[RMDB]
RNA sequence: GGGAACGACUCGAGUAGAGUCGAAAAUCAGGACCCCCUAUACUUUGGGGCAUGUUAGACAACAAUCGUUGCGUCGGUAUAAAAUCUAAUGAUAUCUUAGAGGAUACAGAAGAGACUAUGAGCCAUGCGUUGUCGAGAUGUUCGCAUCUCGACAACGAAAAGAAACAACAACAACAAC
Reactivity to 2A3 in 0.01 (KOAc 150mM, MgCl2 10mM, bicine 150mM(pH8.5), 24C), signal-to-noise 1, nucleotides 027 to 126: u030c010a000g050g050a190c010c020c000c000c030u030a050u070a160c130u030u090u150g010g000g000g000c000a020u060g010u040u110a130g020a080c030a040a010c050a140a180u050c110g040u030u060g000c060g200u040c010g040g060u110a040u110a160a030a020a050u030c010u030a050a060u040g070a090u030a050u000c000u000u040a070g030a060g250g000a060u020a030c040a050g080a050a010g050a020g000a000c020u080a000u190g060a070g130c000c000a030u020g110
Reactivity to DMS in 0.01 (KOAc 150mM, MgCl2 10mM, bicine 150mM(pH8.5), 24C), signal-to-noise 2, nucleotides 027 to 126: u010c040a090g000g000a300c060c010c000c010c150u010a120u000a060c160u000u000u000g030g020g010g030c030a010u000g020u000u000a050g030a180c100a020a090c090a090a050u000c060g030u010u010g020c030g020u000c040g010g000u000a010u000a000a050a060a060u000c010u000a050a130u000g000a100u000a030u000c010u000u000a150g010a110g000g000a070u000a020c030a010g000a210a070g000a160g000a100c060u000a050u000g000a040g000c020c040a100u020g010
Structure probing data (2A3 and DMS) for a 177-nucleotide construct. For DMS, 923 sequencing reads were counted. For DMS the reverse transcriptase was MarathonRT. For 2A3, 655 sequencing reads were counted. For 2A3 the reverse transcriptase was SuperScript II with manganese.